Source: RMDB library OK1LIB, as collected in RNAgym. Chemical mapping of a 177-nucleotide RNA with DMS and 2A3. For DMS, 19,676 sequencing reads were counted. Reactivities are given for positions 27 through 126. Conditions: 150 mM KOAc, 10 mM MgCl2 and 150 mM bicine (pH 8.5), 24 C.
RNA sequence: GGGAACGACUCGAGUAGAGUCGAAAAUGGACACUGUACCAAGAAUGUGUGAGAAUACAGGCAGGGAUAACAUCCUUCAGCAUUUAUAACCUGGUGAUAGGGCGCCUACACGACCGACUGAGAAGCACAUGUUAUACAACUUCGGUUGUAUAACAUGAAAAGAAACAACAACAACAAC
Reactivity to DMS in 0.01 (KOAc 150mM, MgCl2 10mM, bicine 150mM(pH8.5), 24C), signal-to-noise 8, nucleotides 027 to 126: u010g000g010a060c050a090c060u020g030u020a080c020c030a070a090g010a120a050u000g000u010g020u000g010a130g020a090a060u020a050c100a040g000g000c060a060g010g020g000a060u010a050a090c080a300u010c030c010u000u030c040a090g010c040a060u000u010u040a050u020a060a090c060c040u000g000g000u010g000a070u010a060g000g000g000c030g010c020c020u000a050c070a060c040g010a060c050c030g000a070c070u010g010a070g000a060a080g000c140a180
Reactivity to 2A3 in 0.01 (KOAc 150mM, MgCl2 10mM, bicine 150mM(pH8.5), 24C), signal-to-noise 9, nucleotides 027 to 126: u120g030g010a030c040a010c070u090g040u110a090c010c020a040a040g110a100a100u140g060u020g010u040g040a070g060a110a050u150a110c030a020g010g070c030a010g010g000g040a020u040a090a050c040a080u040c010c000u040u060c020a020g010c010a030u020u100u070a180u110a070a050c010c010u030g010g040u070g060a070u100a090g030g020g010c040g040c010c010u040a030c060a020c030g060a060c020c010g030a040c030u060g020a010g010a130a010g020c030a020